[RMDB]
RNA sequence: GGGAACGACUCGAGUAGAGUCGAAAAGCGUACUACUUUCCUUUUGACGCUCCGUAAUUGUCAGUGGCUCCCAAAUAGGAGCCACUUGGAUUUAUUACGGAGCGAUAAGGAAAGUAUCGCAAACAGAAAUAGGUGUGCUUCGGCACACCUAUUUCUGCAUCCUCUGCUGGUUCGCCAGCAGAGGAUGAAAAGAAACAACAACAACAAC
Reactivity to 2A3 in 0.01 (KOAc 150mM, MgCl2 10mM, bicine 150mM(pH8.5), 24C), signal-to-noise 1, nucleotides 027 to 156: g010c010g050u110a170c040u010a000c000u080u000u010c000c020u000u000u050u240g270a090c030g000c000u000c010c010g010u000a010a010u010u000g020u040c010a000g000u000g020g020c000u050c020c080c060a140a300a140u290a070g040g010a010g000c000c020a000c000u000u030g000g000a010u000u000u300a040u010u010a030c070g010g010a000g010c000g000a000u010a000a000g000g000a000a000a020g000u000a020u210c010g010c010a050a070a000c000a000g000a000a010a000u000a000g020g000u010g030u030g030c060u080u220c300g000g000c000a010c020a000c000c000u000a000u000u000u000c000u000g010